[RMDB]
RNA sequence: GGGAACGACUCGAGUAGAGUCGAAAAUAUCUCUGGAGUGACUGUGAUGGUCCCGGCGGAAUGUUUUGGAUGGCACAAUUCAGACGGAAGAGAUUGUGAUCUUCAGCAACACCCUCACAAUGAGGUGCAAUGUACGGCAUUUCGAUGCCGUACAUUGAAAAGAAACAACAACAACAAC
Reactivity to DMS in 0.01 (KOAc 150mM, MgCl2 10mM, bicine 150mM(pH8.5), 24C), signal-to-noise 2, nucleotides 027 to 126: u010a040u010c030u010c020u000g010g020a150g020u010g020a060c090u000g010u010g010a140u020g000g010u000c020c040c050g000g020c070g020g020a060a060u010g010u000u000u010u000g020g020a040u000g020g040c050a060c060a040a070u000u000c050a070g010a110c120g000g020a120a070g000a100g000a060u000u010g000u000g010a100u000c060u000u000c040a090g000c090a060a090c080a110c090c000c000u000c020a090c210a080a140u020g000a020g010g010u000g020
Reactivity to 2A3 in 0.01 (KOAc 150mM, MgCl2 10mM, bicine 150mM(pH8.5), 24C), signal-to-noise 3, nucleotides 027 to 126: u110a020u010c040u000c020u050g040g060a090g080u080g050a040c020u060g040u100g110a070u120g000g020u040c000c030c000g020g030c030g000g050a110a060u060g080u050u120u070u070g060g010a050u050g050g000c010a010c010a070a050u110u090c040a030g100a130c020g050g070a060a030g020a020g010a050u000u110g020u010g040a060u030c000u080u060c040a010g030c010a030a040c010a050c030c000c000u000c020a080c050a040a250u210g020a020g000g010u050g040
The record gives the reactivity of an RNA of 177 nucleotides to DMS and 2A3. It was measured as part of the RMDB library OK2TST. For DMS, 3,625 sequencing reads were counted. For 2A3, 2,840 sequencing reads were counted.